[RMDB]
The record gives the reactivity of an RNA of 207 nucleotides to 2A3. The data come from the RNA Mapping Database (RMDB), library OK3TST. The 2A3 profile rests on 483 reads.

RNA sequence: GGGAACGACUCGAGUAGAGUCGAAAAUCUUCAUUACUAACAUCUGUUUUCCAUUCAUUCAUGUUAGUUUCUCUGAUUAAACCAACAUUUCAGAGCCAAUUUGUCAGUAUUGGUGGAAAAGAAAGUUCAGAAUCGAGUGAAAUAUGAUGCAAAUGAACACGUCACCUAUGUUCGCAUAGGUGACGUGAAAAGAAACAACAACAACAAC
Reactivity to 2A3 in 0.01 (KOAc 150mM, MgCl2 10mM, bicine 150mM(pH8.5), 24C), signal-to-noise 1, nucleotides 027 to 156: u040c020u100u040c030a060u000u140a080c000u030a040a070c000a000u000c040u020g040u000u020u000u020c040c010a010u050u100c000a000u000u000c070a070u060g000u050u030a060g010u050u020u030c040u000c000u040g040a010u000u160a090a040a130c100c080a030a070c040a080u090u000u000c040a040g040a000g060c020c000a000a000u000u120u090g170u170c050a040g060u090a040u020u030g000g010u010g010g100a070a070a000a000g030a000a000a000g070u040u130c010a000g000a020a050u070c040g020a020g000u080g000a030a020a060u200a040u130g070a010u040g050c070a000a110a000u060g000a040a010